Chemical mapping of a 177-nucleotide RNA with DMS and 2A3.
For DMS, 1,544 sequencing reads were counted.
Source: RMDB library OK1LIB, as collected in RNAgym.
Reactivities are rounded to 0.1 and cut off at 0 and 3.
RNA sequence: GGGAACGACUCGAGUAGAGUCGAAAACGAGCAAUGCCGGUGGCGACGGACCGGGUGGGUAGGCAGGCGUUGGAGAAACACCGAGAAACGUUGUCCCGUGCCACGGAUGUACCCCCCGCGCUCAUCGGCUGUUGGAGAACUUCGGUUCUCCAACAGCAAAAGAAACAACAACAACAAC
Reactivity to DMS in 0.01 (KOAc 150mM, MgCl2 10mM, bicine 150mM(pH8.5), 24C), signal-to-noise 1, nucleotides 027 to 126: c100g000a050g000c150a150a030u020g000c000c030g060g020u000g010g000c020g000a110c090g010g030a140c300c100g000g000g000u010g010g010g090u000a000g000g050c050a270g000g000c000g000u020u020g080g000a110g000a100a030a010c000a020c020c000g010a080g010a150a090a070c090g020u000u000g000u020c010c020c000g060u010g010c020c040a110c160g020g030a120u000g010u000a000c000c000c010c000c000c050g000c060g000c040u060c000a020u000c040g010
Reactivity to 2A3 in 0.01 (KOAc 150mM, MgCl2 10mM, bicine 150mM(pH8.5), 24C), signal-to-noise 2, nucleotides 027 to 126: c030g040a020g130c070a160a130u220g020c000c000g020g000u000g000g000c050g000a140c080g050g130a090c000c040g000g020g040u290g130g000g000u040a050g030g010c010a010g000g060c000g030u130u230g040g000a120g110a070a110a000c060a030c010c020g030a070g120a150a080a000c020g010u040u000g140u040c090c020c000g040u000g030c010c020a040c020g060g040a090u090g010u050a030c000c000c000c000c000c000g000c020g020c010u140c060a020u000c000g000
The reactions ran in a buffer of 150 mM KOAc, 10 mM MgCl2 and 150 mM bicine (pH 8.5), at 24 C.